[RMDB]
RNA sequence: GGGAACGACUCGAGUAGAGUCGAAAACGCACUCGCAGCUUAAUAACCUGCGCUGAGCCCUUCUCCCCCAGCUUGCCUGUGUCCUAGGGAACUGGAAGGUCAUCCUUCACAGGAUCGUGUGGAAGUCAUUACUCGUGAGUGUUCGCACUCACGAGAACAGUGAUAGGUACUUCGGUACCUAUCACUGAAAAGAAACAACAACAACAAC
Reactivity to 2A3 in 0.01 (KOAc 150mM, MgCl2 10mM, bicine 150mM(pH8.5), 24C), signal-to-noise 2, nucleotides 027 to 156: c070g000c000a040c000u010c010g000c000a000g000c020u030u000a080a020u020a060a040c010c000u000g000c000g000c120u040g030a040g040c050c000c000u120u040c080u050c040c030c000c000c000a010g000c010u080u150g010c000c000u030g000u010g020u160c000c040u070a080g000g030g040a020a010c000u020g050g060a070a040g050g000u050c030a120u200c000c000u050u090c050a060c000a090g030g010a080u070c060g020u070g000u000g130g010a010a010g010u040c010a100u050u190a060c000u000c000g000u000g000a000g010u010g000u010u040c070g010c010a010c020u000c010a000c020g000a000g000a000a000
Reactivity to DMS in 0.01 (KOAc 150mM, MgCl2 10mM, bicine 150mM(pH8.5), 24C), signal-to-noise 2, nucleotides 027 to 156: c030g000c030a110c030u000c010g070c040a040g010c040u000u000a190a150u010a150a090c290c000u020g000c020g080c180u000g000a070g020c020c050c070u000u010c060u010c030c010c020c050c020a040g000c030u000u000g000c010c010u000g030u000g010u000c020c030u000a160g000g020g000a040a070c000u010g000g010a060a060g030g010u010c070a100u010c000c000u000u000c030a130c050a010g000g010a130u000c060g030u030g020u000g010g000a070a300g020u020c080a100u000u000a140c010u000c050g020u000g010a030g020u010g030u000u010c300g060c030a010c000u000c010a010c010g010a000g000a010a080